[RMDB]
RNA sequence: GGGAACGACUCGAGUAGAGUCGAAAAAGUAUUGGCGGAAUCUAACGCAAUCUGGAGUUUCAAUAUGGAAAAUGGAGGAACGCGCAAUACAUUGACAUCUUCAAAUGAAGCGGCGUUGGAGGAUAUACUUUUACCGAGGAUUCGUCCUCGGUAAAAGAAAAGAAACAACAACAACAAC
Reactivity to DMS in 0.01 (KOAc 150mM, MgCl2 10mM, bicine 150mM(pH8.5), 24C), signal-to-noise 1, nucleotides 027 to 126: a150g020u000a010u000u020g040g010c030g020g060a150a080u000c040u000a040a160c010g010c060a130a080u010c130u000g000g010a130g020u000u010u000c010a060a100u000a060u010g000g010a020a040a050a070u030g000g000a140g010g030a090a050c060g030c000g000c040a040a060u010a050c010a060u000u000g000a040c150a100u020c050u000u000c020a040a070a040u000g000a080a020g030c280g010g030c000g040u000u000g000g000a040g010g020a130u010a160u010a070
An RNA of 177 nucleotides, treated with DMS and read out base by base. For DMS, 918 sequencing reads were counted. Conditions: 150 mM KOAc, 10 mM MgCl2 and 150 mM bicine (pH 8.5), 24 C.